Structure probing data (DMS and 2A3) for a 177-nucleotide construct.
Values cover nucleotides 27 to 126.
RNA sequence: GGGAACGACUCGAGUAGAGUCGAAAAGUGUUAUCGAUUAUUUGUCACACUGUUUGAGCAUCGUUGACAUGGUGUCUCUACCUAGCCAGAAAGGGGAGAAGCGUAUGUUAGACAAAGUCUUCGAGAAGCUCACAUACUAGUUCGCUAGUAUGUGAGCAAAAGAAACAACAACAACAAC
Reactivity to DMS in 0.01 (KOAc 150mM, MgCl2 10mM, bicine 150mM(pH8.5), 24C), signal-to-noise 3, nucleotides 027 to 126: g020u000g010u000u000a120u000c050g000a040u010u000a110u000u000u010g010u000c070a170c110a060c070u000g020u000u010u000g010a120g020c040a040u000c060g000u010u000g010a090c160a070u020g020g020u000g000u000c010u000c010u000a110c020c030u000a110g000c050c120a100g010a070a070a050g000g010g000g000a070g010a040a060g010c060g010u010a030u010g030u000u000a100g020a030c040a050a040a070g000u000c050u000u000c040g010a110g010a110a190
Reactivity to 2A3 in 0.01 (KOAc 150mM, MgCl2 10mM, bicine 150mM(pH8.5), 24C), signal-to-noise 4, nucleotides 027 to 126: g090u070g010u090u080a100u090c030g030a050u020u060a070u060u150u120g030u030c010a030c010a010c060u070g070u140u100u120g080a020g000c020a040u030c020g040u040u070g060a050c030a030u060g010g000u040g050u020c000u000c000u040a160c010c000u050a040g120c060c030a040g100a190a170a010g020g000g000g000a070g000a030a020g020c010g010u100a060u160g080u030u060a050g000a030c010a010a050a020g060u000c020u040u030c010g050a070g010a100a010